[RMDB]
RNA sequence: GGGAACGACUCGAGUAGAGUCGAAAAGCGUACUACGGUCCGCCAUGGCAAUGAUGCGAGCCUACCCACCUGGUCCCAAAUAGGACCAGAGGGCUCGUUGAGCCAUGGAGUGGGACCGUAUCGCAAAUCUAGCGAAAACUUCGGUUUUCGCUAGAAACUUUAUUGGGAGGUUCGCCUCCCAAUAAAGAAAAGAAACAACAACAACAAC
Reactivity to DMS in 0.01 (KOAc 150mM, MgCl2 10mM, bicine 150mM(pH8.5), 24C), signal-to-noise 2, nucleotides 027 to 156: g040c030g040u000a040c080u000a030c020g010g030u000c000c010g030c020c000a050u000g000g000c020a100a090u000g000a070u000g010c010g020a030g000c010c000u000a050c020c010c040a300c090c000u000g010g000u030c000c020c020a050a220a240u010a050g000g010a000c000c000a010g000a110g000g010g000c010u000c010g010u000u010g000a040g000c010c000a050u000g040g000a020g040u010g010g010g000a010c000c000g000u000a000u000c000g010c030a080a060a100u000c020u000a020g020c000g010a040a000a010a020c000u000u000c300g050g000u000u000u000u000c000g020c000u000a000g000a000a040a050
Reactivity to 2A3 in 0.01 (KOAc 150mM, MgCl2 10mM, bicine 150mM(pH8.5), 24C), signal-to-noise 2, nucleotides 027 to 156: g000c000g030u050a060c060u000a000c040g010g000u000c000c010g000c010c000a010u010g000g000c040a120a300u100g040a030u110g050c010g000a000g000c010c010u060a120c090c020c020a020c000c000u000g000g010u030c000c020c020a180a300a170u300a070g000g000a000c010c000a000g020a000g000g010g000c000u000c010g000u000u000g000a020g000c000c000a000u010g000g010a020g050u200g040g010g010a010c090c000g000u020a030u000c000g000c000a000a030a100u030c000u010a000g000c000g000a000a000a010a010c020u050u090c160g000g030u000u000u000u000c000g000c000u000a000g000a000a000a000